An RNA of 207 nucleotides, treated with 2A3 and read out base by base. The 2A3 profile rests on 467 reads. 2A3 is a SHAPE reagent: it acylates the 2'-hydroxyl of flexible nucleotides of all four kinds.
[RMDB]
RNA sequence: GGGAACGACUCGAGUAGAGUCGAAAAAUCUGCUCACAAGUGAACUUCGACUAGUUAGUACUCCACCUGCUCUGUGCAGGGUAAGCCUCUUGUUCUAUCUUCUGGACAUUUCCAUUUACCAAAAUUCACAUGCCACUUCUUGAUUUUGGAUGUUCAAGAGGAGCUAUCAGUUCGCUGAUAGCUCCUCAAAAGAAACAACAACAACAAC
Reactivity to 2A3 in 0.01 (KOAc 150mM, MgCl2 10mM, bicine 150mM(pH8.5), 24C), signal-to-noise 1, nucleotides 027 to 156: a000u030c050u080g020c020u000c020a050c030a000a060g000u050g140a160a010c060u080u000c070g030a030c020u090a050g070u180u030a000g070u050a030c000u020c030c020a040c060c010u010g060c000u140c140u270g130u180g100c010a010g000g040g000u000a050a000g010c000c030u040c000u000u110g020u070u040c020u050a140u000c000u120u040c050u060g050g000a030c050a070u040u060u080c000c080a110u060u030u100a210c040c020a020a020a020a100u120u120c010a010c000a090u110g190c050c050a020c170u180u100c060u090u140g050a080u030u090u100u000g020g020a080u040g080u030u050c000a030a030